[RMDB]
RNA sequence: GGGAACGACUCGAGUAGAGUCGAAAAGUGUAUAGGCUUUCCGAGACCCCGCCUAUACACAAGUUACGGGGUCAGGUCAUGUUAUGCUGGCUAUCUUACGUGUGCACCGAAGGGCUGCGGGUGCACACGAAUCUUACGCAGCCCAUUGCCAGCUAGACCAUAUGCACUGAUUCGUCAGUGCAUAUGGAAAAGAAACAACAACAACAAC
Reactivity to 2A3 in 0.01 (KOAc 150mM, MgCl2 10mM, bicine 150mM(pH8.5), 24C), signal-to-noise 2, nucleotides 027 to 156: g000u000g000u000a010u000a020g020g000c020u140u100u060c050c010g070a080g020a120c010c000c000c020g020c000c000u000a000u000a000c000a010c000a020a010g090u070u180a040c060g010g010g000g000u010c030a020g010g070u050c020a080u110g030u140u130a050u170g000c020u010g000g000c000u040a080u150c060u160u200a050c010g000u000g000u000g000c010a010c010c020g040a040a110g000g000g000c030u000g010c020g040g000g000u000g000c010a010c000a000c020g000a000a010u060c010u070u110a030c020g000c000a000g000c000c000c000a020u010u080g010c000c000a000g000c030u060a030g010a000
Reactivity to DMS in 0.01 (KOAc 150mM, MgCl2 10mM, bicine 150mM(pH8.5), 24C), signal-to-noise 1, nucleotides 027 to 156: g040u000g020u000a030u000a000g040g000c160u010u000u000c040c040g010a150g010a030c020c020c010c150g030c040c000u000a050u000a010c030a070c030a090a060g020u010u000a040c110g000g030g020g000u010c050a120g000g030u000c070a090u040g010u010u020a060u000g050c040u010g020g010c040u010a170u000c060u010u000a130c020g000u000g040u010g000c000a010c000c010g010a080a070g000g010g020c020u010g040c020g000g000g010u000g000c020a000c050a010c000g000a000a060u010c060u000u010a070c160g000c030a020g010c020c000c010a250u000u000g030c010c010a070g020c000u080a130g000a300

Structure probing data (2A3 and DMS) for a 207-nucleotide construct.
Conditions: 150 mM KOAc, 10 mM MgCl2 and 150 mM bicine (pH 8.5), 24 C.
It was measured as part of the RMDB library OK3TST.